Structure probing data (2A3 and DMS) for a 177-nucleotide construct. It was measured as part of the RMDB library OK1LIB. The RNA was probed in 150 mM KOAc, 10 mM MgCl2 and 150 mM bicine (pH 8.5) at 24 C.
RNA sequence: GGGAACGACUCGAGUAGAGUCGAAAAACGCGCCGGGGUAAGCUAACCAGGUUGAAGGCCCCUUCAAGUCCAUACAAAUAGACCGUACUAGGCUUCAUAGCCUUGCUGGACGCGUAAGGAGACGUAACACCAUCUUACGAUUCGUCGUAAGAUGGUGAAAAGAAACAACAACAACAAC
Reactivity to 2A3 in 0.01 (KOAc 150mM, MgCl2 10mM, bicine 150mM(pH8.5), 24C), signal-to-noise 4, nucleotides 027 to 126: a010c020g000c000g000c000c010g000g000g000g060u100a100a060g080c040u020a060a060c030c020a060g050g060u020u050g070a030a010g030g000c000c000c030c000u010u060c120a080a030g000u020c030c000a010u060a250c080a070a040a040u090a070g050a040c040c010g020u030a050c040u050a070g030g000c000u030u130c080a140u240a090g040c000c000u000u070g030c030u060g020g040a080c010g000c020g000u030a080a040g120g020a090g010a010c040g060u050a040a000
Reactivity to DMS in 0.01 (KOAc 150mM, MgCl2 10mM, bicine 150mM(pH8.5), 24C), signal-to-noise 7, nucleotides 027 to 126: a070c060g010c040g000c020c030g000g000g000g010u020a040a080g020c070u000a060a160c060c050a100g000g000u040u010g010a110a130g000g010c050c050c010c020u010u010c090a090a120g000u000c010c030a080u010a070c180a090a100a130u040a080g010a070c080c030g000u010a130c080u010a020g000g010c000u000u020c230a110u030a070g000c000c000u000u000g000c110u010g000g010a050c020g000c180g010u010a040a070g000g010a120g000a070c070g000u010a090a150

DMS (dimethyl sulfate) methylates the pairing face of unpaired adenines and cytosines.